Overview
Chemical mapping of a 177-nucleotide RNA with 2A3 and DMS.

RNA sequence: GGGAACGACUCGAGUAGAGUCGAAAAUCUAGGCAACGUACGGGAGACGUAGUUCUUCAAUCACAUGACGCCUAGGGGAAAGUCCCCGGAUCUCGGGUAGAAAGUGCCGUGCGCUACUAUGGCGUGCCACCUUCAAAAUGUUCGCAUUUUGAAGGUGAAAAGAAACAACAACAACAAC
Reactivity to 2A3 in 0.01 (KOAc 150mM, MgCl2 10mM, bicine 150mM(pH8.5), 24C), signal-to-noise 4, nucleotides 027 to 126: u030c010u020a000g000g010c020a060a010c090g040u090a020c080g050g020g000a010g010a020c040g190u160a080g070u130u000c000u020u020c010a060a180u100c050a030c010a120u110g080a090c080g000c000c000u000a000g000g000g000g040a050a130a050g090u050c030c000c010c020g040g050a100u060c070u050c100g040g000g030u030a050g100a080a140a020g090u050g040c050c020g010u030g010c010g010c010u080a100c060u070a090u250g030g010c010g010u010g020c000
Reactivity to DMS in 0.01 (KOAc 150mM, MgCl2 10mM, bicine 150mM(pH8.5), 24C), signal-to-noise 5, nucleotides 027 to 126: u010c010u000a020g000g020c010a090a300c070g030u010a070c300g010g010g010a030g020a020c020g020u010a110g010u000u000c010u000u000c020a070a130u010c190a070c080a050u000g010a130c300g000c010c000u010a010g000g000g000g000a090a100a180g000u000c020c000c000c050g000g000a070u010c050u000c040g020g020g000u010a050g000a080a090a060g020u000g010c070c090g040u000g010c030g000c010u000a090c150u000a120u000g010g000c020g030u010g000c070

DMS adducts were read by reverse transcription with MarathonRT. Conditions: 150 mM KOAc, 10 mM MgCl2 and 150 mM bicine (pH 8.5), 24 C. For 2A3, 3,924 sequencing reads were counted.